RNA sequence: GGGAACGACUCGAGUAGAGUCGAAAAGUGGAUAUGCGGUUAAACAGCGUAAGGGUGGAGCUUCUUGGUUCACCUACAACAACUCAAUGGUUCAGAUUCUCAAACAUGGCCGCUAUGAUAUUCGUGCAUGGACUCAAAUGCUUGAAGGAACUGGUGCGGUGACAUACCUAUUCGUAGGUAUGUCACCAAAAGAAACAACAACAACAAC
Reactivity to 2A3 in 0.01 (KOAc 150mM, MgCl2 10mM, bicine 150mM(pH8.5), 24C), signal-to-noise 2, nucleotides 027 to 156: g070u030g030g050a020u040a020u140g040c000g010g010u070u110a060a220a100c040a090g040c070g030u110a080a140g040g040g010u050g060g020a060g030c030u080u040c030u180u190g060g000u080u000c030a030c010c000u050a030c030a140a000c000a030a030c000u070c070a020a080u090g040g000u070u050c030a020g040a100u080u040c080u010c000a090a120a040c050a040u040g030g000c010c010g000c040u020a050u080g060a030u010a110u090u070c060g020u050g020c010a010u050g000g050a050c000u030c070a030a040a080u040g000c020u020u080g030a040a010g030g020a000a040c020u060g000g050u070g050c020
Reactivity to DMS in 0.01 (KOAc 150mM, MgCl2 10mM, bicine 150mM(pH8.5), 24C), signal-to-noise 1, nucleotides 027 to 156: g060u000g030g010a140u000a070u020g020c030g040g010u010u000a060a090a090c050a080g030c090g010u010a110a120g000g020g030u010g040g000a060g030c000u000u000c200u000u000g020g010u000u000c030a040c020c030u010a020c090a090a080c030a110a080c020u020c050a030a080u020g000g000u000u000c010a040g000a090u010u000c020u010c020a100a040a080c050a120u000g030g010c050c070g030c030u000a030u000g010a070u000a190u000u000c080g030u000g030c020a060u000g000g010a080c050u000c080a080a030a070u010g000c020u000u000g000a050a000g050g030a080a120c090u000g020g010u000g020c110